[RMDB]
Structure probing data (DMS and 2A3) for a 177-nucleotide construct. The data come from the RNA Mapping Database (RMDB), library TTRDEL. Values cover nucleotides 27 to 126. For 2A3, 2,081 sequencing reads were counted. The RNA was probed in 150 mM KOAc, 10 mM MgCl2 and 150 mM bicine (pH 8.5) at 24 C. For DMS, 817 sequencing reads were counted. 2A3 adducts were read by reverse transcription with SuperScript II with manganese. For DMS the reverse transcriptase was MarathonRT.
RNA sequence: GGGAACGACUCGAGUAGAGUCGAAAAGAUAUGGAUCGCCAGUGGCUGACCACGUCGGAAACGAUAUCAAGCCCUGGGCGAUCCUAAGUCAAAGUGUCUUUAGUAAGUUCGCUUACUAAAGACACAAGAGUGAUACCCAGUUCGCUGGGUAUCACUCAAAAGAAACAACAACAACAAC
Reactivity to DMS in 0.01 (KOAc 150mM, MgCl2 10mM, bicine 150mM(pH8.5), 24C), signal-to-noise 1, nucleotides 027 to 126: g010a080u000a210u020g000g000a020u000c000g070c000c000a000g010u010g090g010c020u000g090a130c300c260a040c160g020u010c010g040g000a060a090a150c010g010a000u000a030u000c010a190a040g010c020c010c000u010g000g000g000c000g060a010u000c000c010u010a010a070g000u000c030a080a090a110g000u010g000u000c000u000u000u000a000g000u000a010a000g020u010u000c290g000c000u000u000a000c000u020a000a000a000g010a000c000a000c010a070a020
Reactivity to 2A3 in 0.01 (KOAc 150mM, MgCl2 10mM, bicine 150mM(pH8.5), 24C), signal-to-noise 1, nucleotides 027 to 126: g030a010u110a040u160g000g000a000u020c000g000c020c000a060g030u090g240g020c000u000g000a060c000c090a250c300g030u080c070g000g070a070a050a000c000g000a010u010a010u120c090a060a050g000c000c000c000u030g080g100g000c000g000a000u000c000c000u010a070a020g000u030c040a110a080a040g040u000g010u000c000u000u030u000a000g010u000a000a020g000u050u180c300g030c210u000u010a000c000u010a010a000a010g000a000c000a000c000a000a020